[RMDB]
RNA sequence: GGGAACGACUCGAGUAGAGUCGAAAAGCUGCUGGUCAGGGUGACUUCGGCAUCAUCGGUCACUUGCAGUACACCGCUGCCGGUGACGCUGUUACCAAAGGUGCCGUUAAAACCGCUCAGCGACAGACAAAAUAUCCAGCUUCGGCUGGAUAUUUUGAAAAGAAACAACAACAACAAC
Reactivity to DMS in 0.01 (KOAc 150mM, MgCl2 10mM, bicine 150mM(pH8.5), 24C), signal-to-noise 1, nucleotides 027 to 126: g040c050u000g020c060u010g000g000u000c110a180g030g000g030u020g000a150c230u000u000c020g010g000c000a010u010c000a200u030c130g000g000u000c010a000c010u030u000g000c020a000g010u000a110c170a040c200c180g010c040u000g010c060c070g010g000u000g010a040c000g020c040u010g040u020u000a130c200c210a030a050a110g000g000u000g000c020c030g000u000u020a010a100a180a040c060c000g000c040u000c020a010g000c010g020a060c090a110g000a290